The record gives the reactivity of an RNA of 177 nucleotides to 2A3 and DMS. Values cover nucleotides 27 to 126. For 2A3 the reverse transcriptase was SuperScript II with manganese.
RNA sequence: GGGAACGACUCGAGUAGAGUCGAAAACUUGCAGCGUCAUCGUGAUCAGCUCGGAGACCCCGUUACCCAGGUAGACGUCGUCCACGUCGAAUCGGGGAAAUCCGGGCACCAGCUCGUAGCGCGUGACACACGAGCUCUUAUUCGUAAGAGCUCGUGUAAAAGAAACAACAACAACAAC
Reactivity to 2A3 in 0.01 (KOAc 150mM, MgCl2 10mM, bicine 150mM(pH8.5), 24C), signal-to-noise 1, nucleotides 027 to 126: c060u080u180g050c040a040g020c030g050u060c030a090u100c040g030u020g040a110u150c050a020g000c000u000c000g000g020a030g030a050c000c000c000c000g020u050u080a090c010c050c060a040g090g000u030a020g010a000c000g000u070c050g080u060c090c050a020c010g000u000c000g030a030a030u090c030g000g000g000g000a010a100a300u000c000c000g010g000g000c010a010c000c010a030g040c000u030c060g040u060a010g000c010g010c020g100u050g050a070c000
Reactivity to DMS in 0.01 (KOAc 150mM, MgCl2 10mM, bicine 150mM(pH8.5), 24C), signal-to-noise 3, nucleotides 027 to 126: c070u010u000g020c030a070g020c040g000u020c020a070u040c030g000u030g000a050u060c210a190g010c000u000c020g020g000a020g010a300c020c000c020c000g000u000u060a070c080c040c090a030g000g010u010a110g010a010c000g000u000c130g020u060c170c120a150c000g010u010c000g020a070a070u030c030g000g010g010g000a010a130a120u000c020c010g000g000g000c010a000c160c110a050g000c020u010c070g030u000a120g020c000g000c040g020u000g020a130c130

Overview: The RNA was probed in 150 mM KOAc, 10 mM MgCl2 and 150 mM bicine (pH 8.5) at 24 C.